[RMDB]
An RNA of 207 nucleotides, treated with DMS and 2A3 and read out base by base.
RNA sequence: GGGAACGACUCGAGUAGAGUCGAAAAUUCUUCUACCUGAUUGGUAAGAAAUGCAUGAGAUCAGUAAAUUCAACUGUGUCUUACUCAAUGCACUAGAAAAUGAAGCUAAAUUUGUGACCUACUUCAUGCAAAUGGAUGGGUCCUCCUGGCAUGAAUGCCUUUAUACGGGUUUCGACCCGUAUAAAGGAAAAGAAACAACAACAACAAC
Reactivity to DMS in 0.01 (KOAc 150mM, MgCl2 10mM, bicine 150mM(pH8.5), 24C), signal-to-noise 2, nucleotides 027 to 156: u000u020c040u000u000c020u000a060c060c000u010g000a160u010u000g000g010u010a060a110g010a080a070a100u010g030c040a060u000g010a200g040a040u000c060a070g020u010a060a080a130u000u020c080a050a120c060u000g030u020g030u000c030u020u000a070c070u000c090a110a040u000g000c040a050c070u000a060g020a100a040a060a040u010g010a070a110g020c050u000a030a090a120u000u000u010g010u000g000a100c030c020u040a040c050u000u000c010a020u000g010c100a040a080a100u000g010g000a040u000g010g010g020u000c040c020u000c070c010u000g040g020c030a070u010g000a020a100u020g000
Reactivity to 2A3 in 0.01 (KOAc 150mM, MgCl2 10mM, bicine 150mM(pH8.5), 24C), signal-to-noise 7, nucleotides 027 to 156: u050u000c000u030u010c010u020a020c000c000u120g170a220u180u190g040g020u050a070a050g020a030a090a020u050g000c010a010u060g010a020g000a070u030c020a010g020u090a060a170a200u270u150c080a070a030c000u010g020u030g060u130c020u060u050a080c020u040c120a030a110u030g000c010a020c070u080a030g140a060a100a060a070u150g050a050a010g000c040u090a100a110a180u120u120u080g130u150g000a020c000c020u030a070c110u030u010c010a000u020g050c040a050a120a160u040g010g000a010u030g010g000g040u020c000c010u020c000c010u030g020g020c020a040u090g040a070a030u130g030
For 2A3 the reverse transcriptase was SuperScript II with manganese. For 2A3, 4,337 sequencing reads were counted.